[RMDB]
RNA sequence: GGGAACGACUCGAGUAGAGUCGAAAAACUUGUAUAGGCGAUUAAUAAAUCUUCUGUAAAUGCUGUAAGACGAUUACCCCUUGAGGUUUCAGCACUAGGCUGCUCUAGCGAUUAAUCAAUGCAUUUGUAACGGAAAGACAGUUCGCUGUCUUUCCAACUAUAUGUCCUACUUCGGUAGGACAUAUAGAAAAGAAACAACAACAACAAC
Reactivity to DMS in 0.01 (KOAc 150mM, MgCl2 10mM, bicine 150mM(pH8.5), 24C), signal-to-noise 3, nucleotides 027 to 156: a090c040u010u020g010u000a120u000a110g040g070c040g020a080u000u000a060a130u010a070a090a070u010c010u000u000c020u000g010u000a070a080a070u010g040c000u020g040u000a070a050g010a080c040g010a130u000u000a080c020c010c030c100u010u000g020a090g020g000u000u010u010c020a100g030c040a090c030u000a100g000g000c040u000g020c100u000c030u000a070g030c060g010a110u000u000a060a090u000c030a090a150u000g020c030a160u000u000u000g020u000a050a130c110g020g020a040a020a030g010a020c010a030g040u000u020c270g030c030u010g030u000c000u010u000u010c010c000a010a070
Reactivity to 2A3 in 0.01 (KOAc 150mM, MgCl2 10mM, bicine 150mM(pH8.5), 24C), signal-to-noise 4, nucleotides 027 to 156: a000c050u080u080g060u070a110u080a110g110g000c030g020a040u090u160a200a100u260a180a120a070u040c040u130u010c030u090g100u110a050a050a010u040g000c020u010g060u130a080a030g060a040c060g010a030u020u050a040c040c000c030c000u010u040g020a020g020g050u050u100u230c030a010g020c000a010c060u060a050g250g000c020u010g000c010u020c020u050a010g030c010g060a050u060u140a050a010u040c060a030a020u090g040c030a050u010u030u070g070u050a090a020c060g000g000a000a000a000g000a000c000a000g010u060u080c200g000c100u010g000u000c000u010u000u000c000c000a000a000
Conditions: 150 mM KOAc, 10 mM MgCl2 and 150 mM bicine (pH 8.5), 24 C. Chemical mapping of a 207-nucleotide RNA with DMS and 2A3. For 2A3 the reverse transcriptase was SuperScript II with manganese. For DMS the reverse transcriptase was MarathonRT. It was measured as part of the RMDB library M2RFPK.